[RMDB]
RNA sequence: GGGAACGACUCGAGUAGAGUCGAAAAGAACAAGAGGGGUUUUUGUCUUCUACUGAACAUCCAAACUGAUUACAAGGAAGACAAGAUUCAAAAGGUUGGUUAGGAUGAUCCCUCAAGCACCAUCCUCCUAGUAGAUGCAAUUCGUUGCAUCUACUAGAAAAGAAACAACAACAACAAC
Reactivity to DMS in 0.01 (KOAc 150mM, MgCl2 10mM, bicine 150mM(pH8.5), 24C), signal-to-noise 7, nucleotides 027 to 126: g010a180a140c090a040a120g000a050g010g000g010g010u000u000u010u000u000g000u000c000u000u000c010u000a150c200u000g010a060a120c240a030u000c030c150a080a110a170c300u010g000a050u000u000a230c080a050a160g010g000a020a020g000a030c020a010a020g000a070u000u000c090a050a050a110a080g000g000u000u000g000g000u000u000a140g000g000a060u000g000a060u010c000c010c000u000c040a030a110g010c080a060c050c010a030u000c010c010u000c190
Reactivity to 2A3 in 0.01 (KOAc 150mM, MgCl2 10mM, bicine 150mM(pH8.5), 24C), signal-to-noise 4, nucleotides 027 to 126: g010a050a010c050a070a020g020a020g070g000g010g030u010u010u030u050u050g010u000c010u030u030c010u050a120c100u050g020a050a010c010a040u040c040c030a170a120a130c080u080g020a060u050u050a080c030a070a080g030g000a000a000g010a000c010a000a000g030a050u090u060c030a070a160a040a010g070g030u050u040g050g020u080u080a070g050g040a060u080g010a030u050c000c000c000u030c010a010a010g060c030a010c000c010a010u020c000c000u030c000
Description:
Structure probing data (DMS and 2A3) for a 177-nucleotide construct. 2A3 adducts were read by reverse transcription with SuperScript II with manganese. Source: RMDB library OK2TRN, as collected in RNAgym. For 2A3, 6,041 sequencing reads were counted. For DMS the reverse transcriptase was MarathonRT.